[RMDB]
RNA sequence: GGGAACGACUCGAGUAGAGUCGAAAAUAAUAGUGACAGAUGGGCAAGAUGAAGAAGCAUUUCACUCAGCGUUGCGGUGGAGAGUUAUCGAUAUAAUGCGGUCACUAUUCAACAAGUCCACCAAGUCUCCAUACCUGCUAUUCGUAGCAGGUAUGGAAAAAGAAACAACAACAACAAC
Reactivity to DMS in 0.01 (KOAc 150mM, MgCl2 10mM, bicine 150mM(pH8.5), 24C), signal-to-noise 4, nucleotides 027 to 126: u050a040a000u000a020g010u000g000a020c000a140g000a130u050g030g010g000c000a020a050g010a080u000g020a090a230g010a040a050g040c030a080u020u000u000c030a010c000u000c030a160g010c150g030u000u000g000c060g010g010u000g000g010a010g020a050g030u010u010a150u000c050g010a120u170a030u020a060a100u000g000c020g000g000u000c000a000c010u000a020u010u000c230a070a110c240a060a100g000u010c020c030a090c070c080a070a110g030u020c080
Reactivity to 2A3 in 0.01 (KOAc 150mM, MgCl2 10mM, bicine 150mM(pH8.5), 24C), signal-to-noise 4, nucleotides 027 to 126: u160a000a010u010a010g040u000g030a020c030a040g260a110u180g030g110g030c010a020a070g010a060u110g060a090a110g040a070a010g030c020a020u060u030u030c000a000c010u080c020a050g040c090g170u150u140g030c030g010g010u040g010g000a050g000a000g020u010u040a150u160c000g000a000u010a020u060a170a150u200g020c030g040g000u010c010a000c000u000a020u010u020c010a010a040c030a040a050g080u000c000c010a050c020c020a110a020g040u030c030